Chemical mapping of a 177-nucleotide RNA with DMS and 2A3. For DMS, 5,407 sequencing reads were counted. 2A3 adducts were read by reverse transcription with SuperScript II with manganese. The 2A3 profile rests on 2,911 reads. Values cover nucleotides 27 to 126.
RNA sequence: GGGAACGACUCGAGUAGAGUCGAAAAAAAGGCGGGCGCUGUGCGUUCUGUGGAGGAGCAGCAGGCUCGGAUAUCGGCCGCUGCGGUAGCCCCGAGGCCGAUACGCGUUGCGAUCGCCGAGGCGCAGUGAACGACGAUAAUUCGUUAUCGUCGUUCAAAAAGAAACAACAACAACAAC
Reactivity to DMS in 0.01 (KOAc 150mM, MgCl2 10mM, bicine 150mM(pH8.5), 24C), signal-to-noise 4, nucleotides 027 to 126: a040a060a090g010g000c020g010g000g020c020g010c020u010g000u010g010c040g010u000u000c040u010g020u000g020g010a250g010g000a180g010c010a080g010c040a120g050g000c040u010c050g030g000a140u010a050u020c030g020g010c020c010g020c040u000g020c020g010g020u000a130g000c080c060c000c030g000a300g000g010c060c040g010a050u010a010c060g010c030g000u000u000g020c010g000a050u010c020g000c010c010g010a090g000g010c080g010c080a100g010
Reactivity to 2A3 in 0.01 (KOAc 150mM, MgCl2 10mM, bicine 150mM(pH8.5), 24C), signal-to-noise 2, nucleotides 027 to 126: a010a010a000g050g000c040g000g000g010c070g000c020u020g020u020g020c000g010u020u050c010u030g080u110g050g060a140g000g030a060g030c000a000g000c060a060g070g010c130u130c160g000g010a100u120a060u160c020g000g000c020c020g010c050u030g020c010g040g030u080a040g030c030c050c010c000g010a030g000g050c010c030g000a010u030a090c020g000c000g000u010u070g000c010g010a040u000c020g000c000c010g000a060g000g000c080g010c050a040g070